An RNA of 177 nucleotides, treated with DMS and 2A3 and read out base by base. Conditions: 150 mM KOAc, 10 mM MgCl2 and 150 mM bicine (pH 8.5), 24 C. For DMS, 1,414 sequencing reads were counted. The data come from the RNA Mapping Database (RMDB), library OK1LIB. For 2A3 the reverse transcriptase was SuperScript II with manganese. For DMS the reverse transcriptase was MarathonRT.

[RMDB]
RNA sequence: GGGAACGACUCGAGUAGAGUCGAAAAGCUACCCGUCCGCCGUGAACGCCUUUUUGCACACUCUUUCUCCCCAACUUGUGGAAAGGGCGCACUUCCUUCUCUGCGUUGGCGAGGCUGGACAGGCAAGGAGCCUACUGGAUUUCGAUCCAGUAGGCUCAAAAGAAACAACAACAACAAC
Reactivity to DMS in 0.01 (KOAc 150mM, MgCl2 10mM, bicine 150mM(pH8.5), 24C), signal-to-noise 1, nucleotides 027 to 126: g000c130u050a110c020c040c050g010u000c000c000g000c030c010g040u020g010a130a200c040g000c000c030u000u000u000u000u000g010c010a120c030a070c150u000c110u010u000u000c230u000c070c000c010c000a010a110c130u020u050g100u010g000g000a020a000a050g030g000g000c040g040c120a020c080u000u010c020c030u000u010c090u000c020u040g000c030g000u010u050g000g000c120g000a110g050g010c030u000g010g010a000c070a010g000g000c070a070a020g000
Reactivity to 2A3 in 0.01 (KOAc 150mM, MgCl2 10mM, bicine 150mM(pH8.5), 24C), signal-to-noise 4, nucleotides 027 to 126: g070c020u050a080c010c010c000g030u010c010c010g000c010c000g050u040g090a140a040c000g040c030c030u030u120u000u020u280g100c020a010c010a030c020u090c040u050u130u060c090u070c050c010c000c010a020a070c060u080u070g040u050g050g040a040a050a020g050g030g020c020g000c000a040c000u150u170c000c010u130u060c060u030c020u070g070c050g080u060u060g010g030c030g020a080g010g000c010u030g020g020a060c040a040g000g060c030a010a050g120